[RMDB]
RNA sequence: GGGAACGACUCGAGUAGAGUCGAAAAUUCUGUUGCUACUCAACCACUUAAUGAACUGAUGUUCUUGUCCAGAGGCUUUGUCAGACACCACACGGGAUACUAUUUGGCCCCGCUGAAGUGGCGUUCACUGUCAGAUUAUGUUCGCAUAAUCUGACAGAAAAGAAACAACAACAACAAC
Reactivity to 2A3 in 0.01 (KOAc 150mM, MgCl2 10mM, bicine 150mM(pH8.5), 24C), signal-to-noise 2, nucleotides 027 to 126: u010u000c030u050g150u090u050g000c010u030a070c040u020c050a020a060c000c050a060c040u070u150a130a080u190g040a030a010c040u090g050a070u150g110u040u010c010u040u070g030u030c040c040a010g000a000g000g000c000u130u150u110g070u030c060a040g020a090c010a020c070c000a040c020a040c030g020g000g000a040u080a220c040u030a140u280u100u110g050g000c000c000c020c000g010c050u070g060a090a010g060u040g070g010c020g020u100u120c040a040
Reactivity to DMS in 0.01 (KOAc 150mM, MgCl2 10mM, bicine 150mM(pH8.5), 24C), signal-to-noise 4, nucleotides 027 to 126: u000u000c030u000g010u010u010g010c040u010a080c060u010c050a100a100c060c050a050c080u000u000a090a090u010g000a070a080c040u010g000a090u010g010u000u000c040u000u000g010u000c080c050a130g000a060g020g000c080u000u010u000g020u000c070a100g010a100c080a040c050c040a050c060a100c060g010g000g010a100u010a040c100u000a160u000u010u010g020g000c060c020c030c030g010c120u000g000a040a070g020u000g000g000c030g000u000u000c070a160